[RMDB]
RNA sequence: GGGAACGACUCGAGUAGAGUCGAAAAGACUGCGUGCACUUGAGACGAUAUCGAGCCGGAAAUUAAUCGAUAAUGUCUCCUGUAGUGGAUACGAUCCGGCAAGUAUCGACUACGUGUGCUCGUAGGAGGUGGUCGAGUCGUUCGCGACUCGACCACCAAAAGAAACAACAACAACAAC
Reactivity to 2A3 in 0.01 (KOAc 150mM, MgCl2 10mM, bicine 150mM(pH8.5), 24C), signal-to-noise 1, nucleotides 027 to 126: g090a000c000u000g010c000g000u000g020c000a000c000u000u020g000a000g000a000c020g050a040u000a010u070c060g000a000g020c000c000g010g060a100a080a120u200u250a040a120u080c030g050a090u090a120a110u160g020u000c000u020c010c000u090g040u040a020g000u010g040g000a000u000a030c030g040a010u150c000c040g000g000c030a030a030g000u000a000u000c020g020a030c000u020a070c000g030u010g010u000g000c000u000c000g000u000a000g000g000a070